[RMDB]
RNA sequence: GGGAACGACUCGAGUAGAGUCGAAAAUUCUGACUUUUCCUAAUCAGUUCUUCCUGCUAAAAUACAGUAGCUUAACAAAAACAAUGACAACAACAAUCUGGUGUUUGCCAUUUACAAGGCACUUUCUGUGUGAGUAGCAUGACAUGGUAAAAGAGAACACGAAAAUUUUAUUCGUAAAAUUUUCGUGAAAAGAAACAACAACAACAAC
Reactivity to DMS in 0.01 (KOAc 150mM, MgCl2 10mM, bicine 150mM(pH8.5), 24C), signal-to-noise 1, nucleotides 027 to 156: u030u000c060u000g000a170c080u000u000u020u000c030c030u000a190a130u000c070a050g010u020u000c090u000u010c000c030u000g000c050u000a050a080a130a070u000a040c030a060g010u000a050g000c010u000u060a160a210c180a070a180a120a040a070c140a120a090u020g000a020c030a000a100c050a030a030c020a070a180u000c120u010g030g000u010g010u000u000u000g070c000c000a040u000u000u000a100c070a080a080g010g000c040a050c070u030u010u000c050u000g040u000g000u000g020a090g000u000a080g000c030a040u000g020a060c070a130u000g040g000u000a030a030a010a100g010a200g000a110a280
Reactivity to 2A3 in 0.01 (KOAc 150mM, MgCl2 10mM, bicine 150mM(pH8.5), 24C), signal-to-noise 3, nucleotides 027 to 156: u080u010c030u030g070a070c030u100u040u050u050c010c010u040a080a070u060c030a010g030u100u070c020u040u010c020c020u010g010c000u010a040a060a110a090u070a060c060a030g010u020a010g010c030u140u070a110a010c080a060a090a040a030a000c030a030a080u290g070a040c010a040a000c000a020a000c010a070a140u110c110u130g030g040u020g100u030u060u100g050c020c000a040u060u100u140a110c060a090a080g000g020c020a000c080u060u190u040c040u040g040u010g010u000g040a030g040u000a020g000c010a010u030g040a020c030a060u060g030g050u170a050a020a070a060g080a000g040a030a010

An RNA of 207 nucleotides, treated with DMS and 2A3 and read out base by base. The DMS profile rests on 1,379 reads. The data come from the RNA Mapping Database (RMDB), library OK3TST. For DMS the reverse transcriptase was MarathonRT. The 2A3 profile rests on 1,535 reads. Conditions: 150 mM KOAc, 10 mM MgCl2 and 150 mM bicine (pH 8.5), 24 C.